[RMDB]
RNA sequence: GGGAACGACUCGAGUAGAGUCGAAAAGGACACCAUCAAGCUCACUGCAGCCUUUGCAGAUACACAGCUCCCGGCAUUCGAUGGGACGAAGCUCAAAGAUUGGCAGGACGCCGUCAGGUGCCAUGCACGAAGCGAACUUGUUCGCAAGUUCGCUUCGAAAAGAAACAACAACAACAAC
Reactivity to DMS in 0.01 (KOAc 150mM, MgCl2 10mM, bicine 150mM(pH8.5), 24C), signal-to-noise 3, nucleotides 027 to 126: g020g000a110c020a040c010c020a090u010c160a250a150g010c020u010c160a240c010u000g000c030a060g030c150c020u000u000u010g020c200a030g000a090u020a040c150a100c200a180g000c030u000c000c000c000g000g020c110a150u000u010c100g000a130u000g000g000g000a060c040g000a050a110g000c010u020c000a010a090a100g000a070u000u000g010g000c000a020g000g050a110c210g010c000c030g000u000c130a050g010g010u000g000c000c030a090u010g000c140a140
Reactivity to 2A3 in 0.01 (KOAc 150mM, MgCl2 10mM, bicine 150mM(pH8.5), 24C), signal-to-noise 2, nucleotides 027 to 126: g030g010a060c010a020c020c030a060u070c060a050a040g000c030u050c100a070c020u010g030c000a010g100c010c030u040u110u070g000c070a010g000a050u170a080c110a000c020a080g020c130u030c000c020c000g110g000c080a080u300u300c120g130a090u190g000g030g000a010c040g060a020a010g000c020u010c040a020a010a040g010a100u050u090g140g000c000a000g000g000a020c010g000c000c020g050u110c050a040g040g000u020g000c000c000a020u080g080c090a090
Source information: Chemical mapping of a 177-nucleotide RNA with DMS and 2A3. DMS adducts were read by reverse transcription with MarathonRT. For 2A3 the reverse transcriptase was SuperScript II with manganese. The reactions ran in a buffer of 150 mM KOAc, 10 mM MgCl2 and 150 mM bicine (pH 8.5), at 24 C. For 2A3, 1,519 sequencing reads were counted.